[RMDB]
Background:
This 177-nucleotide RNA was probed chemically with 2A3 and DMS. The RNA was probed in 150 mM KOAc, 10 mM MgCl2 and 150 mM bicine (pH 8.5) at 24 C. DMS adducts were read by reverse transcription with MarathonRT. Source: RMDB library TTRDEL, as collected in RNAgym. The DMS profile rests on 13,095 reads.
RNA sequence: GGGAACGACUCGAGUAGAGUCGAAAAGAUAUGGAGGCUUGCAAGCACCUGUCGGAAACGACAGAAGUGUGAUGACCAAAGGCCUCCUAAGUCAAAAGUUAGCUUAGGGUUCGCCCUAAGCUAACAACAUACCCUUAAUCUUCGGAUUAAGGGUAUGAAAAGAAACAACAACAACAAC
Reactivity to 2A3 in 0.01 (KOAc 150mM, MgCl2 10mM, bicine 150mM(pH8.5), 24C), signal-to-noise 6, nucleotides 027 to 126: g000a000u020a010u050g000g010a000g000g000c010u000u000g020c020a040a010g020c000a010c010c010u000g000u000c000g000g010a010a010a000c010g020a000c010a000g090a240a300g030u000g010u040g070a300u030g000a010c010c000a040a050a020g300g110c010c000u000c000c000u000a000a000g000u000c010a030a080a050a210g010u000u010a000g000c000u010u000a000g040g030g040u070u160c300g180c000c000c000u000a000a000g000c000u000a000a000c000a000a000
Reactivity to DMS in 0.01 (KOAc 150mM, MgCl2 10mM, bicine 150mM(pH8.5), 24C), signal-to-noise 9, nucleotides 027 to 126: g000a020u000a020u010g000g000a010g000g010c010u000u000g000c020a020a020g010c000a010c010c000u000g010u000c000g010g000a010a010a030c000g010a010c000a000g010a070a090g020u000g020u000g010a050u010g000a270c300c010a000a020a050g010g010c010c000u000c010c000u000a000a060g000u000c010a070a110a130a160g000u000u000a010g010c000u000u000a000g000g010g000u000u000c280g010c000c000c000u000a000a010g000c000u000a000a000c000a090a190